[RMDB]
RNA sequence: GGGAACGACUCGAGUAGAGUCGAAAAAGCUGCACAGUUGAUCUCAGCCUAUUAUAGUUCAGGAGAUAAAGAAGCUGACUUGAAUCCAGCUCCCCAAUUAGGCUUUUCUCGCGGGCUCAAAUCCAUGCUACUUGCCCUAAUUCGUUAGGGCAAGUAGAAAAGAAACAACAACAACAAC
Reactivity to 2A3 in 0.01 (KOAc 150mM, MgCl2 10mM, bicine 150mM(pH8.5), 24C), signal-to-noise 3, nucleotides 027 to 126: a030g010c040u060g000c020a060c030a110g100u130u070g130a080u030c020u010c050a020g000c020c010u130a120u190u070a140u170a130g060u090u110c040a030g040g090a040g070a080u150a100a150a020g080a080a020g010c010u020g010a060c080u060u110g050a030a000u020c040c000a000g000c020u040c010c010c010c020a050a050u090u090a030g000g010c000u090u050u040u010c010u000c040g050c040g000g010g010c010u010c060a060a120a050u060c040c030a080u150g020
Reactivity to DMS in 0.01 (KOAc 150mM, MgCl2 10mM, bicine 150mM(pH8.5), 24C), signal-to-noise 2, nucleotides 027 to 126: a070g000c070u010g010c120a080c110a080g010u050u000g000a070u010c000u010c070a050g000c140c030u000a040u000u060a080u010a090g000u030u000c060a090g000g010a030g000a050u010a050a030a090g010a100a080g000c060u000g060a060c120u020u010g000a120a080u030c090c030a090g010c070u000c050c020c020c050a060a110u010u020a070g010g000c010u020u010u010u000c010u000c020g000c050g000g000g010c020u050c060a020a060a080u000c050c030a130u050g020
The record gives the reactivity of an RNA of 177 nucleotides to 2A3 and DMS. 2A3 adducts were read by reverse transcription with SuperScript II with manganese. It was measured as part of the RMDB library OK1LIB. The reactions ran in a buffer of 150 mM KOAc, 10 mM MgCl2 and 150 mM bicine (pH 8.5), at 24 C.